[RMDB]
RNA sequence: GGGAACGACUCGAGUAGAGUCGAAAACGUUUGGUUCGGGUCAAUUUCAGUGACGGCACUUUCCUCGAGUGCACCGAAUAUCACAAGUUUCAUCUUCAGAUCGGAUAUGGUUCAACGACGGAAAUCAAGCCAACCACGAAUCUUGUUCCAGGUGACCCUAGUCUGACCUAUUCGUAGGUCAGACUAGAAAAGAAACAACAACAACAAC
Reactivity to 2A3 in 0.01 (KOAc 150mM, MgCl2 10mM, bicine 150mM(pH8.5), 24C), signal-to-noise 2, nucleotides 027 to 156: c040g000u000u080u090g000g010u050u040c030g020g000g030u050c050a110a120u050u020u140c120a120g020u030g040a060c030g020g000c010a000c010u020u020u070c010c010u060c030g050a140g110u020g000c050a010c000c000g060a090a040u040a030u040c030a040c000a150a050g040u030u140u170c060a110u010c030u120u120c040a040g010a190u120c050g040g010a010u000a040u100g010g000u020u010c000a070a020c000g070a020c100g000g020a030a020a000u120c090a150a030g000c000c000a010a020c130c010a090c050g030a040a020u020c000u000u070g030u060u000c030c000a020g000g050u060g090a060c010c010
Reactivity to DMS in 0.01 (KOAc 150mM, MgCl2 10mM, bicine 150mM(pH8.5), 24C), signal-to-noise 1, nucleotides 027 to 156: c040g010u010u000u020g020g020u000u000c050g000g000g080u000c100a120a100u010u000u010c060a170g010u010g010a130c140g040g030c040a130c110u000u000u000c080c040u000c040g010a190g040u000g030c000a150c000c050g010a120a130u030a090u000c040a120c000a080a070g020u000u000u000c020a070u010c050u010u000c130a230g010a090u000c060g000g000a110u000a010u000g030g000u000u000c030a100a130c000g020a120c070g060g000a040a070a090u010c030a000a120g000c000c030a080a060c050c060a100c070g060a040a070u010c060u000u000g030u000u010c010c010a120g010g010u000g010a150c060c080
Structure probing data (2A3 and DMS) for a 207-nucleotide construct. For 2A3, 1,459 sequencing reads were counted. It was measured as part of the RMDB library OK3TST. Reactivities are rounded to 0.1 and cut off at 0 and 3. 2A3 adducts were read by reverse transcription with SuperScript II with manganese. Reactivities are given for positions 27 through 156.